RNA sequence: GGGAACGACUCGAGUAGAGUCGAAAAAUGUUUAAAGAUAUGGAGUGUGUAGCUCGAUGAAACGUGGUGUAAGUCGGAAACGACUGAGCCACGUGGAGAGCGUUCACACUCCUAAGUCAGGAUUGAACCAUCCUAUUACCUUCGGGUAAUAGGAUGGAAAAGAAACAACAACAACAAC
Reactivity to DMS in 0.01 (KOAc 150mM, MgCl2 10mM, bicine 150mM(pH8.5), 24C), signal-to-noise 5, nucleotides 027 to 126: a080u010g010u000u010u000a060a140a110g010a020u010a300u000g010g000a010g010u000g020u000g010u000a210g000c000u010c000g000a140u020g000a070a130a010c000g030u000g000g010u000g000u010a300a100g000u010c010g000g020a130a080a180c010g010a020c000u000g000a300g000c020c000a000c000g000u000g000g000a050g000a010g000c000g000u000u000c010a000c000a020c000u000c000c000u010a020a050g000u000c020a120g020g000a170u000u000g000a100a140
Reactivity to 2A3 in 0.01 (KOAc 150mM, MgCl2 10mM, bicine 150mM(pH8.5), 24C), signal-to-noise 3, nucleotides 027 to 126: a000u110g060u050u080u070a250a270a070g020a030u050a020u160g000g000a000g010u010g020u000g030u030a030g000c000u020c150g160a300u000g010a030a010a000c000g000u000g000g030u040g010u280a000a010g000u010c000g000g060a080a050a040c000g010a000c000u010g010a000g010c000c010a000c000g010u000g000g000a010g010a000g020c000g020u070u020c000a000c010a000c020u000c000c000u000a010a000g000u000c020a000g130g180a280u100u260g080a080a040
This 177-nucleotide RNA was probed chemically with DMS and 2A3.
Values cover nucleotides 27 to 126.
The data come from the RNA Mapping Database (RMDB), library TTRDEL.
In probing experiments dimethyl sulfate is read out at A N1 and C N3, which are open when not base-paired.
The reactions ran in a buffer of 150 mM KOAc, 10 mM MgCl2 and 150 mM bicine (pH 8.5), at 24 C.
The 2A3 profile rests on 4,052 reads.